[RMDB]
RNA sequence: GGGAACGACUCGAGUAGAGUCGAAAACCGUAACCGAUAUCGAACGCGUCGGCCAAUCUGCUACACAGCUCAGCGGAAUUCUGAUGCUUGUCCGACGACUUCAUUAGUUACGGGAAGUGAUAAUCCAACUGUGGAGCACGUUCGCGUGUUCCACAGUAAAAGAAACAACAACAACAAC
Reactivity to 2A3 in 0.01 (KOAc 150mM, MgCl2 10mM, bicine 150mM(pH8.5), 24C), signal-to-noise 4, nucleotides 027 to 126: c000c000g000u000a000a000c000c020g050a030u030a010u090c100g000a020a010c070g000c000g000u000c000g000g000c000c000a010a040u040c020u040g000c010u060a030c090a010c020a050g000c020u020c020a020g010c000g060g070a040a060u130u000c010u010g030a030u050g030c000u010u000g000u000c000c000g000a000c000g070a070c000u000u000c000a000u000u010a000g000u000u000a010c000g000g000g000a030a020g060u060g040a060u010a100a010u010c000c000a010
Reactivity to DMS in 0.01 (KOAc 150mM, MgCl2 10mM, bicine 150mM(pH8.5), 24C), signal-to-noise 5, nucleotides 027 to 126: c000c000g000u000a010a020c000c040g000a030u020a070u020c180g010a010a010c300g000c010g000u000c000g010g000c140c040a000a050u020c070u010g020c050u030a110c140a130c140a080g000c060u000c070a030g000c110g000g030a090a130u020u010c050u010g000a040u030g000c060u000u000g000u010c000c000g000a000c010g000a080c040u000u000c000a040u000u000a090g000u000u000a010c000g020g000g020a080a080g010u030g000a110u020a070a110u010c020c010a090